[RMDB]
RNA sequence: GGGAACGACUCGAGUAGAGUCGAAAAAUACUAUUCGUAGUAUAUAAUUCCUAAGUCCUGCAUCGAUCAGCUAUACAGCGCCGGUGAAAUACUACUCGGAAACGAGUAGGAGCUGUAGCUGGGAGCAGGAUAUGGAUACACUCAGCUUCGGCUGAAAAGGUAAUAAGUGUUUCGACACUUAUUACCUAAAAGAAACAACAACAACAAC
Reactivity to DMS in 0.01 (KOAc 150mM, MgCl2 10mM, bicine 150mM(pH8.5), 24C), signal-to-noise 2, nucleotides 027 to 156: a060u010a060c000u000a030u010u000c200g010u010a030g010u000a000u010a100u000a130a200u010u000c000c020u040a050a240g010u000c010c020u010g030c020a220u000c110g000a080u010c030a010g020c020u000a180u000a110c020a010g000c010g010c070c020g030g070u010g000a110a040a110u010a090c020u000a040c000u010c000g000g020a100a140a300c000g020a040g030u010a030g000g010a020g010c020u010g060u000a030g010c020u000g000g020g010a090g010c000a020g030g000a010u000a020u040g010g000a210u030a100c100a120c080u000c000a030g020c000u000u010c270g020g000c000u000g020a040a070a080
Reactivity to 2A3 in 0.01 (KOAc 150mM, MgCl2 10mM, bicine 150mM(pH8.5), 24C), signal-to-noise 4, nucleotides 027 to 156: a000u010a020c010u030a030u070u080c120g050u040a020g010u010a020u010a030u040a100a250u120u060c000c010u040a180a010g020u000c010c000u020g060c050a300u140c090g180a110u080c020a020g000c000u040a040u030a300c000a010g010c020g070c100c150g220g050u220g070a080a040a020u120a080c000u000a000c000u000c010g020g060a080a110a060c010g000a000g000u010a000g000g010a020g000c000u000g000u020a000g010c000u000g000g020g000a010g000c000a000g020g000a000u010a000u000g000g000a020u050a100c100a040c080u030c010a010g030c000u060u120c180g150g000c000u000g000a070a080a020

Structure probing data (DMS and 2A3) for a 207-nucleotide construct.
For DMS, 3,472 sequencing reads were counted.
High 2A3 reactivity points to a flexible backbone, as in loops and unpaired stretches.